The data come from the RNA Mapping Database (RMDB), library OK3TST. An RNA of 207 nucleotides, treated with 2A3 and DMS and read out base by base. For DMS, 8,222 sequencing reads were counted. The reactions ran in a buffer of 150 mM KOAc, 10 mM MgCl2 and 150 mM bicine (pH 8.5), at 24 C. The 2A3 profile rests on 4,054 reads. 2A3 adducts were read by reverse transcription with SuperScript II with manganese.
RNA sequence: GGGAACGACUCGAGUAGAGUCGAAAAAGUUUGUAUAAGCACUGUUUAAUACUCCCAGUGCAUGCCAAUUGGUGUUUACAGACGAGUAUGGUAUUGACCAUAUGAUACUAUUCUCUCUCUCAGGAGAGGAGAAUAGAUAACUACAAAGGAGUAACAAAAAUACUAUGAUCUUCGGAUCAUAGUAUUUAAAAGAAACAACAACAACAAC
Reactivity to 2A3 in 0.01 (KOAc 150mM, MgCl2 10mM, bicine 150mM(pH8.5), 24C), signal-to-noise 5, nucleotides 027 to 156: a000g030u040u010u010g040u010a060u030a180a060g000c000a000c000u000g030u050u130u080a130a070u040a010c000u000c010c000c000a000g000u010g000c000a010u040g010c000c030a280a300u150u300g010g000u040g020u060u090u060a030c020a010g020a000c010g030a020g020u010a010u010g010g010u070a140u230u300g130a060c000c010a010u010a020u040g060a030u030a090c000u000a010u010u000c010u000c000u000c000u000c010u010c100a140g000g190a010g030a010g040g020a030g000a000a000u000a000g000a000u040a050a070c140u160a060c110a030a050a020g000g000a000g010u000a030a010c040a020a160
Reactivity to DMS in 0.01 (KOAc 150mM, MgCl2 10mM, bicine 150mM(pH8.5), 24C), signal-to-noise 4, nucleotides 027 to 156: a160g010u000u000u010g030u000a080u000a090a160g010c000a020c020u010g000u000u000u000a110a140u000a060c030u000c020c120c020a090g030u000g010c040a130u000g030c010c040a130a170u010u010g010g020u000g020u000u000u000a110c070a100g000a100c020g020a150g030u000a020u000g030g040u000a210u010u000g020a100c000c020a030u000a010u000g010a180u000a100c000u000a020u020u000c000u000c010u000c000u030c010u000c160a220g060g010a070g010a040g010g010a020g010a010a020u010a010g000a110u010a020a150c120u000a170c060a060a060a080g000g010a060g010u010a040a110c090a040a110